[RMDB]
RNA sequence: GGGAACGACUCGAGUAGAGUCGAAAAACCUCAGUCUUCGGACUGAGGUGAGCGGAGCAUGGUGGCCGAGGGAACUCCUCCUUGGUGACAAGGGCCCACGGGGUGCGGCACGCUUCGGCGUGCCGAACUGCGGGAUUGAAUUCGUUCAAUCCCGCAGAAAAGAAACAACAACAACAAC
Reactivity to DMS in 0.01 (KOAc 150mM, MgCl2 10mM, bicine 150mM(pH8.5), 24C), signal-to-noise 1, nucleotides 027 to 126: a040c000c000u000c000a020g020u000c000u000u010c150g020g000a020c010u000g020a020g010g000u000g000a060g050c080g030g010a070g010c070a100u010g000g010u000g020g020c030c030g000a060g000g010g000a080a130c100u000c030c030u000c010c000u000u000g000g000u010g030a210c050a050a040g000g000g000c030c000c010a080c090g000g000g000g050u010g010c000g000g010c020a010c000g020c020u000u020c120g010g000c010g030u000g010c000c020g000a000a060
Structure probing data (DMS) for a 177-nucleotide construct. For DMS the reverse transcriptase was MarathonRT. In probing experiments dimethyl sulfate is read out at A N1 and C N3, which are open when not base-paired.